[RMDB]
RNA sequence: GGGAACGACUCGAGUAGAGUCGAAAAAACACUGUGUAGGAUAGGUGGGAGGCUUUGAAGUGUGGACGCCAGUCUGCAUGGAGCCGACCUUGAAAUACCACCCUUUAAUGAAGUAAAACAAAGCCAAUCUCCAUUAUAACUUCGGUUAUAAUGGAGAAAAAGAAACAACAACAACAAC
Reactivity to DMS in 0.01 (KOAc 150mM, MgCl2 10mM, bicine 150mM(pH8.5), 24C), signal-to-noise 6, nucleotides 027 to 126: a050a030c080a040c040u010g000u010g010u000a040g000g010a070u000a020g030g020u000g000g000g000a130g020g010c000u000u000u010g000a110a080g010u000g010u000g010g010a010c020g000c100c210a070g010u000c010u010g000c010a000u010g000g000a010g010c010c000g000a060c300c040u010u000g000a050a040a090u000a070c010c010a030c000c010c020u010u000u010a080a070u010g010a070a080g010u000a050a040a080a080c130a060a080a120g020c080c070a090a140
Reactivity to 2A3 in 0.01 (KOAc 150mM, MgCl2 10mM, bicine 150mM(pH8.5), 24C), signal-to-noise 2, nucleotides 027 to 126: a000a000c070a000c010u060g020u010g020u060a020g050g060a010u000a030g010g000u000g060g010g010a140g020g000c000u300u200u000g030a020a020g010u000g000u010g000g000a000c010g020c030c000a000g000u030c000u000g000c000a000u010g000g020a000g000c010c000g000a000c010c000u000u000g000a000a000a000u020a010c010c000a000c000c000c000u010u100u100a160a110u190g110a110a040g050u150a050a040a090a060c090a070a080a020g040c010c020a060a090